[RMDB]
RNA sequence: GGGAACGACUCGAGUAGAGUCGAAAAGGGUGAGCAGCCAAAGCAGGAGUCCCUACAAUUGACUUGUCACCAAGGGAAUGUGGGUGAAUGACCAAGGCAGGCAUCCCUGCAGAGAUCAGACGCCAAUGGAAUGUGGGUGAAUAAUCAGGCAGGCGUACCUCGAUAAUAAUUUCGAUUAUUAUCGAGGAAAAGAAACAACAACAACAAC
Reactivity to DMS in 0.01 (KOAc 150mM, MgCl2 10mM, bicine 150mM(pH8.5), 24C), signal-to-noise 4, nucleotides 027 to 156: g000g020g060u010g000a090g030c030a100g000c010c010a050a130a150g000c060a090g010g020a300g020u000c030c030c000u000a070c030a080a160u000u000g010a080c030u010u010g020u000c040a110c110c030a070a110g010g010g000a040a100u010g020u000g010g020g000u000g000a050a150u000g000a060c020c020a070a250g030g040c030a050g010g000c050a100u010c040c000c000u000g000c030a080g020a180g000a060u000c040a080g030a250c050g030c010c020a060a120u000g000g020a060a080u010g010u000g010g030g000u000g030a060a080u000a040a070u000c040a080g010g020c020a080g010g010c030g020u000a100
Reactivity to 2A3 in 0.01 (KOAc 150mM, MgCl2 10mM, bicine 150mM(pH8.5), 24C), signal-to-noise 5, nucleotides 027 to 156: g040g000g000u050g010a050g060c050a020g020c040c040a070a040a020g070c060a030g040g050a030g060u040c030c000c010u010a020c060a090a180u080u090g040a070c020u030u040g050u160c030a020c090c040a060a050g020g000g050a040a080u090g010u060g050g020g010u060g070a120a080u070g030a050c030c040a020a050g100g000c020a030g040g000c030a080u090c020c000c000u020g000c020a020g040a010g000a170u090c040a010g020a060c040g020c030c000a020a060u100g010g070a110a050u090g010u070g030g000g020u060g030a070a060u150a070a030u100c020a010g050g000c020a010g020g000c010g000u030a030

Background: Structure probing data (DMS and 2A3) for a 207-nucleotide construct. It was measured as part of the RMDB library OK3TST. The 2A3 profile rests on 5,007 reads. The DMS profile rests on 9,742 reads.